RNA sequence: GGGAACGACUCGAGUAGAGUCGAAAAAACUUAAUAUUAUGGUUCCGUAAUGCUAGUGGUGGUGAACGUGGAGCUAUCUAUCAUAGUACUACAACUAACACCUUACGAUUCCGUAGUGCUGGUGGCAGUUCUGUCUCAUCUUCGGAUGAGACAGAACAAAAGAAACAACAACAACAAC
Reactivity to DMS in 0.01 (KOAc 150mM, MgCl2 10mM, bicine 150mM(pH8.5), 24C), signal-to-noise 2, nucleotides 027 to 126: a110a020c010u030u000a080a140u010a070u000u000a020u010g000g030u000u000c030c010g030u000a020a010u000g030c080u000a030g000u000g000g040u000g000g030u000g000a040a060c130g010u010g000g010a250g030c190u000a030u010c030u000a100u020c130a070u010a010g010u000a040c030u000a020c030a060a070c110u000a050a060c040a040c190c110u000u000a010c050g000a180u000u000c060c030g030u000a000g000u000g000c070u010g000g020u000g000g000c170a080
Reactivity to 2A3 in 0.01 (KOAc 150mM, MgCl2 10mM, bicine 150mM(pH8.5), 24C), signal-to-noise 1, nucleotides 027 to 126: a000a000c270u290u090a300a040u300a100u220u040a070u090g030g000u000u000c040c000g010u060a000a060u080g000c080u070a010g040u010g050g000u020g010g020u000g000a050a020c080g040u130g030g020a050g000c040u060a090u100c060u060a130u030c040a060u020a010g010u010a020c000u040a020c000a080a000c010u040a070a030c010a000c020c060u000u180a040c060g060a040u050u000c020c020g030u040a030g020u000g050c020u010g050g000u080g080g060c050a030
Overview:
An RNA of 177 nucleotides, treated with DMS and 2A3 and read out base by base. The reactions ran in a buffer of 150 mM KOAc, 10 mM MgCl2 and 150 mM bicine (pH 8.5), at 24 C. DMS adducts were read by reverse transcription with MarathonRT.